The record gives the reactivity of an RNA of 177 nucleotides to 2A3 and DMS. The data come from the RNA Mapping Database (RMDB), library OK2TST. Conditions: 150 mM KOAc, 10 mM MgCl2 and 150 mM bicine (pH 8.5), 24 C.
RNA sequence: GGGAACGACUCGAGUAGAGUCGAAAACUCUCGUGCCGAUAGUAGCUGAUGCUGGAUUGCACUAGGAUCAGCGAUGGCUUUAUCCAGUGCGAAGGCCCAAGGUCUAUCACGAUGCCCAAUGCCCACGAUGCACUCUUCAUUUCGAUGAAGAGUGCAUAAAAGAAACAACAACAACAAC
Reactivity to 2A3 in 0.01 (KOAc 150mM, MgCl2 10mM, bicine 150mM(pH8.5), 24C), signal-to-noise 2, nucleotides 027 to 126: c040u030c000u000c040g040u070g080c020c040g050a050u030a080g110u090a010g070c020u040g030a040u130g070c020u000g000g080a120u060u200g060c070a030c100u000a070g040g020a010u020c020a000g000c000g030a050u050g040g000c000u000u010u000a020u030c000c000a030g000u030g070c040g060a060a030g020g010c000c010c010a090a030g050g010u000c010u040a070u080c030a010c090g040a010u110g040c000c020c010a010a020u080g050c020c020c040a040c080g110
Reactivity to DMS in 0.01 (KOAc 150mM, MgCl2 10mM, bicine 150mM(pH8.5), 24C), signal-to-noise 3, nucleotides 027 to 126: c130u010c040u000c020g010u000g040c080c090g010a100u010a060g030u000a120g010c020u000g000a070u000g000c030u000g030g000a170u000u000g000c190a130c020u000a060g010g000a010u000c300a030g030c000g000a080u010g010g010c030u010u010u000a070u000c040c040a070g010u000g010c030g000a100a080g000g010c010c030c020a090a080g010g000u000c030u000a080u010c060a040c050g010a070u000g000c000c000c040a090a130u000g000c030c000c000a080c260g000